[RMDB]
RNA sequence: GGGAACGACUCGAGUAGAGUCGAAAACAAACGGACAACGGGCUUGCCCUUCUGAUGGACCGGCGUGGGUGGUGACUGGCCAUCCCAGAAGGGACCAUCGACUGGUGGCGGAUUCGCCUUCAGGUAGACCAUUACCGUCCUUCGGGACGGUAAUGGUAAAAGAAACAACAACAACAAC
Reactivity to 2A3 in 0.01 (KOAc 150mM, MgCl2 10mM, bicine 150mM(pH8.5), 24C), signal-to-noise 3, nucleotides 027 to 126: c020a050a070a040c050g130g060a030c020a190a000c080g000g000g110c080u080u120g120c010c000c020u070u050c100u160g000a010u030g000g020a060c000c010g030g000c040g070u110g000g060g000u060g010g000u080g090a300c090u090g040g010c010c000a020u080c010c000c000a040g070a050a070g030g030g000a030c000c000a010u050c000g030a070c010u000g030g020u010g010g000c000g070g190a240u300u300c000g000c000c000u040u030c000a020g130g000u040a020g090
Reactivity to DMS in 0.01 (KOAc 150mM, MgCl2 10mM, bicine 150mM(pH8.5), 24C), signal-to-noise 1, nucleotides 027 to 126: c100a010a060a100c130g000g000a210c030a160a120c070g010g020g000c030u000u020g000c000c000c000u020u000c090u000g000a000u000g000g000a300c000c000g040g010c240g020u000g020g000g020u010g050g000u040g000a090c150u050g000g000c000c000a090u010c040c000c000a050g010a080a250g000g000g000a050c080c000a000u020c020g000a000c040u000g000g000u020g000g000c040g000g000a190u060u060c000g030c020c000u000u060c090a020g010g000u090a050g020
Source: RMDB library OK1LIB, as collected in RNAgym. Chemical mapping of a 177-nucleotide RNA with 2A3 and DMS. The reactions ran in a buffer of 150 mM KOAc, 10 mM MgCl2 and 150 mM bicine (pH 8.5), at 24 C. 2A3 adducts were read by reverse transcription with SuperScript II with manganese.